[RMDB]
RNA sequence: GGGAACGACUCGAGUAGAGUCGAAAACACCGUGCGCUCGUCGAUACCACCCGCCUCCGCCUGGGCAGCCAGAUAGCGGUGGGGCCAUGCGACGACGACGUCAUCGGCCGUCGGAAAGCGCGCUGGCGUGCUUAUAUGUCUUCGGACAUAUAAGCACAAAAGAAACAACAACAACAAC
Reactivity to 2A3 in 0.01 (KOAc 150mM, MgCl2 10mM, bicine 150mM(pH8.5), 24C), signal-to-noise 9, nucleotides 027 to 126: c070a010c000c020g030u030g010c010g010c000u020c020g020u010c000g010a020u040a100c030c040a040c020c030c010g210c050c030u060c010c010g030c010c000u020g010g030g030c080a100g210c000c000a020g050a090u180a070g020c010g000g010u020g020g000g010g000c020c030a160u290g020c000g010a000c000g000a010c010g000a000c000g030u040c020a230u160c050g210g020c030c000g000u010c000g010g110a180a070a030g010c010g000c010g020c080u100g040g020c040
Reactivity to DMS in 0.01 (KOAc 150mM, MgCl2 10mM, bicine 150mM(pH8.5), 24C), signal-to-noise 7, nucleotides 027 to 126: c100a210c030c020g000u010g000c020g020c010u000c020g020u000c000g010a040u020a140c220c290a170c050c000c030g010c040c010u000c020c020g030c030c010u000g000g010g000c300a170g000c010c010a020g000a070u010a080g000c090g010g000u000g010g000g000g000c160c110a070u020g010c030g000a030c020g000a110c020g000a020c010g000u010c050a170u040c150g000g000c090c020g010u010c000g020g010a090a060a070g000c010g010c010g010c010u020g000g010c200
Chemical mapping of a 177-nucleotide RNA with 2A3 and DMS.
For DMS the reverse transcriptase was MarathonRT.
The RNA was probed in 150 mM KOAc, 10 mM MgCl2 and 150 mM bicine (pH 8.5) at 24 C.